Source: RMDB library M2RFPK, as collected in RNAgym. Chemical mapping of a 207-nucleotide RNA with DMS and 2A3. High DMS reactivity at an A or C suggests that its Watson-Crick edge is free. For DMS the reverse transcriptase was MarathonRT. For DMS, 4,688 sequencing reads were counted.
[RMDB]
RNA sequence: GGGAACGACUCGAGUAGAGUCGAAAAGAGUCACCCUCCUCGCAUCGCAAGUUCGUGCUUGCGACUUACACGUAGGGCGAGGGGUGGGCGAAAGUUGCCAUGAGACCGUAACUUUCGUAGUCAUUGAAAAACUACAAAGCCUUCGGGCUUUGUAGAACCUAACGGAUAAGUUCGCUUAUCCGUUAGGAAAAGAAACAACAACAACAAC
Reactivity to DMS in 0.01 (KOAc 150mM, MgCl2 10mM, bicine 150mM(pH8.5), 24C), signal-to-noise 2, nucleotides 027 to 156: g010a130g030u000c020a090c000c000c000u000c020c000u000c020g000c160a130u010c010g020c010a000a020g020u000u000c270g060u010g010c020u000u000g060c010g010a010c030u010u010a170c120a090c230g030u000a050g010g040g020c040g030a020g020g000g010g030u000g010g030g010c000g000a020a020a050g030u000u000g020c010c050a200u000g010a170g000a150c140c110g000u010a030a030c000u000u000u000c010g020u000a090g010u000c100a130u010u010g010a070a120a050a140a110c000u000a010c000a010a020a020g010c000c010u000u000c300g060g020g010c020u000u020u000g010u000a000g010a040a090
Reactivity to 2A3 in 0.01 (KOAc 150mM, MgCl2 10mM, bicine 150mM(pH8.5), 24C), signal-to-noise 8, nucleotides 027 to 156: g030a000g070u070c020a040c010c010c000u020c000c010u000c000g000c010a040u020c000g000c000a010a010g010u190u270c140g170u300g110c000u000u010g000c000g000a000c000u050u120a050c100a030c110g190u180a120g050g120g000c000g000a000g010g000g000g010u150g010g030g000c010g000a000a000a000g010u010u000g010c020c020a050u090g070a050g020a250c040c020g000u000a000a000c000u010u000u000c010g000u010a020g080u040c060a080u040u120g030a060a050a030a030a010c000u010a000c000a000a000a000g000c000c010u060u110c240g050g000g000c000u000u000u000g000u000a010g000a000a000